The record gives the reactivity of an RNA of 177 nucleotides to 2A3 and DMS. DMS adducts were read by reverse transcription with MarathonRT. For 2A3 the reverse transcriptase was SuperScript II with manganese. The RNA was probed in 150 mM KOAc, 10 mM MgCl2 and 150 mM bicine (pH 8.5) at 24 C.
[RMDB]
RNA sequence: GGGAACGACUCGAGUAGAGUCGAAAAGUCGCGUCGCGAGACGAAGUGAGGGCGCGCUAUCAGCGGAUCAUGGACGGGCUGCGCAUCUCGCUGGGCGUCGCGCGUUAGGCCUGUUCACGCUCAUAAAGUAUUAGUGGACGUUCGCGUCCACUAAUACAAAAGAAACAACAACAACAAC
Reactivity to 2A3 in 0.01 (KOAc 150mM, MgCl2 10mM, bicine 150mM(pH8.5), 24C), signal-to-noise 3, nucleotides 027 to 126: g060u040c010g010c010g050u050c030g020c040g090a060g050a080c130g110a080a040g080u080g070a110g020g020g030c010g000c000g000c030u050a070u140c040a010g070c020g070g000a040u140c040a080u110g050g020a010c010g010g000g040c040u100g000c000g000c010a100u070c040u000c050g020c040u090g010g170g010c030g030u060c020g010c000g000c000g030u050u110a070g000g020c000c000u010g000u030u030c030a010c000g030c000u060c040a100u160a100a190a070
Reactivity to DMS in 0.01 (KOAc 150mM, MgCl2 10mM, bicine 150mM(pH8.5), 24C), signal-to-noise 3, nucleotides 027 to 126: g010u000c020g030c030g010u010c030g020c090g010a170g010a090c110g020a120a090g020u000g010a080g010g000g010c000g030c010g000c050u000a060u000c150a040g000c030g020g010a060u010c200a110u000g000g010a030c030g000g020g000c010u000g010c020g020c020a080u000c040u000c000g010c030u010g010g010g030c030g010u000c040g010c070g010c010g000u000u020a120g030g010c010c020u010g010u010u010c010a030c000g010c070u000c130a050u020a040a110a130